[RMDB]
RNA sequence: GGGAACGACUCGAGUAGAGUCGAAAAGGGUUUGGAUUACAUCAAUAGUCACAUGAGCAGAAGUAAACAGAACAAGAAGUACUGCGGUUAUUCAAGUUCAUAGUUCACACUAUCGCAAUAAAUUGAAGUCCUCUAAAAAGUUCGCUUUUUAGAGGACAAAAGAAACAACAACAACAAC
Reactivity to 2A3 in 0.01 (KOAc 150mM, MgCl2 10mM, bicine 150mM(pH8.5), 24C), signal-to-noise 2, nucleotides 027 to 126: g050g020g020u080u060u120g050g010a030u020u050a050c020a050u060c030a030a100u070a120g060u020c030a050c020a140u100g020a020g010c020a010g000a120a000g070u040a040a050a000c030a040g040a040a000c010a070a020g080a030a000g040u030a020c020u030g070c030g130g000u020u000a050u090u050c030a000a020g000u000u040c010a020u070a070g020u070u090c060a030c000a000c060u040a030u100c020g000c050a020a080u080a120a060a020u100u020g030a130a010
Reactivity to DMS in 0.01 (KOAc 150mM, MgCl2 10mM, bicine 150mM(pH8.5), 24C), signal-to-noise 3, nucleotides 027 to 126: g010g000g010u010u000u000g000g000a060u000u000a070c070a070u000c110a060a140u000a060g030u020c040a040c080a030u010g020a090g020c040a060g000a060a050g010u000a030a090a060c060a040g000a030a050c040a070a270g000a060a060g010u000a030c060u000g000c100g010g000u000u000a070u000u000c060a040a280g000u000u000c030a060u000a100g010u000u000c100a080c080a080c090u010a050u000c110g030c100a070a050u020a030a070a100u000u000g010a110a160